[RMDB]
RNA sequence: GGGAACGACUCGAGUAGAGUCGAAAAGCGGGGCUUGAAACGCGGGUAGCGCGCACGCCCGGCGAAGAAGUUCGCAUACGCGGUGUGCUGGUGCCGAAGUGUCUGCUCCAACGGCACGCUCGACACCUAGAACAUACCGUAUUCGUACGGUAUGUAACCAAAUGGAGUGAUUCGUCACUCCAUUUGGAAAAGAAACAACAACAACAAC
Reactivity to 2A3 in 0.01 (KOAc 150mM, MgCl2 10mM, bicine 150mM(pH8.5), 24C), signal-to-noise 4, nucleotides 027 to 156: g080c090g000g010g020g020c040u070u110g070a120a090a020c040g020c010g000g010g010u100a040g040c020g000c010g000c060a000c010g000c010c000c020g000g000c030g010a010a000g080a050a020g180u030u010c010g000c010a050u080a270c030g040c110g030g020u010g000u000g000c050u100g050g010u010g000c000c010g050a080a020g010u020g010u020c030u030g020c020u000c030c010a020a010c010g000g000c010a010c040g020c030u000c010g010a020c000a020c010c010u050a070g030a100a000c000a000u000a010c010c000g010u000a020u020u120c220g050u020a000c000g000g000u000a000u000g010u020a020a060
Reactivity to DMS in 0.01 (KOAc 150mM, MgCl2 10mM, bicine 150mM(pH8.5), 24C), signal-to-noise 2, nucleotides 027 to 156: g030c040g000g000g040g060c030u000u000g010a130a060a090c030g030c070g030g000g030u000a060g030c030g020c060g020c040a040c060g010c010c010c040g000g010c000g040a040a130g000a150a140g000u000u000c020g000c050a070u000a280c040g000c070g140g010u000g030u010g010c040u000g020g020u010g010c000c000g030a090a160g010u000g010u010c040u010g000c070u000c120c120a080a200c060g000g000c000a060c010g000c030u000c000g000a020c030a030c000c010u010a200g010a090a040c030a030u000a000c000c000g040u010a040u010u000c270g070u000a020c040g000g000u000a000u010g010u000a020a150
The record gives the reactivity of an RNA of 207 nucleotides to 2A3 and DMS. The reactions ran in a buffer of 150 mM KOAc, 10 mM MgCl2 and 150 mM bicine (pH 8.5), at 24 C. For 2A3, 4,374 sequencing reads were counted.